[RMDB]
RNA sequence: GGGAACGACUCGAGUAGAGUCGAAAAGGGUUUGAGCCAUCGCCCGAAUAGGAUGGAUGAUACAAGUCGUCAUUGUACGCGACGUAGUACGUACUCAUUAGUGCGAAAGCACGGUUAGUCCGACUCGGCAGGGACGAUCUUCUGUCAAUACUUAGAACGGUAUAUGCCUGUUCGCAGGCAUAUACCGAAAAGAAACAACAACAACAAC
Reactivity to 2A3 in 0.01 (KOAc 150mM, MgCl2 10mM, bicine 150mM(pH8.5), 24C), signal-to-noise 1, nucleotides 027 to 156: g020g030g000u000u100u220g090a040g050c030c010a000u050c000g000c000c000c040g120a030a120u260a120g000g040a010u150g000g000a020u000g040a010u030a150c060a000a150g000u040c030g000u010c030a100u060u120g140u100a060c000g000c000g080a040c060g000u000a000g000u000a170c000g000u040a000c040u000c000a010u050u080a170g000u000g000c050g030a180a030a000g010c000a000c020g000g000u040u000a000g000u000c000c000g000a000c010u010c000g000g000c000a010g070g000g000a060c030g020a010u130c000u060u000c010u040g020u000c050a030a030u180a240c140u090u090a100g050a220a000
About this RNA
This 207-nucleotide RNA was probed chemically with 2A3.